[RMDB]
RNA sequence: GGGAACGACUCGAGUAGAGUCGAAAACGACACCACGAUUAUGCAUACAUGUCGGUUGUCCGAAUCCGUGGUGCAGCUAUGAUGACGCGGAUAUACAUUCGCACGAACGAUAUGAGGAGUUAAUCCAAGAGUCAUACUUCUUCGGAAGUAUGACUCUAAAAGAAACAACAACAACAAC
Reactivity to 2A3 in 0.01 (KOAc 150mM, MgCl2 10mM, bicine 150mM(pH8.5), 24C), signal-to-noise 2, nucleotides 027 to 126: c050g060a010c030a020c010c020a030c010g020a000u000u150a020u190g150c080a020u040a090c000a030u050g090u060c000g000g000u000u060g000u010c020c020g000a010a000u000c010c010g020u030g030g020u130g020c010a050g000c060u180a060u300g080a120u050g020a130c030g020c000g000g000a000u080a000u010a110c120a030u000u030c040g000c040a000c050g020a080a000c000g000a000u000a010u030g050a060g080g000a000g020u050u130a030a020u000c000c000a010
Reactivity to DMS in 0.01 (KOAc 150mM, MgCl2 10mM, bicine 150mM(pH8.5), 24C), signal-to-noise 2, nucleotides 027 to 126: c060g000a100c120a040c070c000a090c040g000a080u000u030a040u020g040c100a080u010a040c120a020u000g000u010c080g010g000u010u000g000u030c140c010g000a080a010u000c030c040g060u010g000g010u020g000c080a030g030c120u000a080u000g000a110u000g040a110c130g020c020g000g000a050u020a130u030a090c170a050u000u000c000g000c110a070c070g000a050a070c020g000a040u000a030u060g000a250g000g000a090g000u020u000a090a190u000c020c050a060
This 177-nucleotide RNA was probed chemically with 2A3 and DMS. The reactions ran in a buffer of 150 mM KOAc, 10 mM MgCl2 and 150 mM bicine (pH 8.5), at 24 C. DMS adducts were read by reverse transcription with MarathonRT.